[RMDB]
The record gives the reactivity of an RNA of 207 nucleotides to DMS and 2A3. DMS adducts were read by reverse transcription with MarathonRT. The RNA was probed in 150 mM KOAc, 10 mM MgCl2 and 150 mM bicine (pH 8.5) at 24 C. For 2A3 the reverse transcriptase was SuperScript II with manganese.
RNA sequence: GGGAACGACUCGAGUAGAGUCGAAAACCCCGUGUGGAACACACGACUAAGCUUCGGCUUAGUAAGAGCAACUUAGUAUGGUAGGCUCCCCGGCGUGUCUCGAACCAUGCCGGGCCAAACCCAUAGGGCUGGCGGUCCCUGUGCGGUCAUUAUGCAAGAUUUAAAUAUCCUUCGGGAUAUUUAAAUCAAAAGAAACAACAACAACAAC
Reactivity to DMS in 0.01 (KOAc 150mM, MgCl2 10mM, bicine 150mM(pH8.5), 24C), signal-to-noise 3, nucleotides 027 to 156: c040c000c020c050g020u010g010u000g000g020a140a140c030a030c040a060c000g020a090c010u010a020a010g030c010u000u000c300g070g010c010u000u000a010g030u010a050a120g010a120g020c030a120a110c030u000u000a210g010u000a050u000g020g020u010a130g010g010c020u000c070c030c020c040g010g000c000g040u000g000u010c100u010c190g010a200a180c170c010a010u000g020c000c000g010g000g010c030c050a030a120a100c050c000c000a070u000a040g010g040g050c040u020g020g030c060g010g010u010c010c010c020u010g010u000g010c040g000g010u000c040a070u000u000a090u000g000c080a110a260
Reactivity to 2A3 in 0.01 (KOAc 150mM, MgCl2 10mM, bicine 150mM(pH8.5), 24C), signal-to-noise 6, nucleotides 027 to 156: c000c000c000c010g010u030g000u020g030g170a160a060c060a000c000a000c120g020a010c000u000a000a000g000c010u020u160c270g080g000c000u010u010a000g000u030a070a060g030a010g010c010a010a080c030u070u070a060g060u080a150u130g080g010u040a060g100g000c010u000c000c010c000c000g000g000c000g020u010g010u010c080u060c220g070a040a030c030c000a010u010g000c000c000g000g000g000c000c000a020a000a000c010c000c000a010u030a010g010g010g010c040u050g080g080c060g020g040u120c000c000c010u000g010u010g010c130g000g020u030c050a110u060u230a050u120g040c050a120a060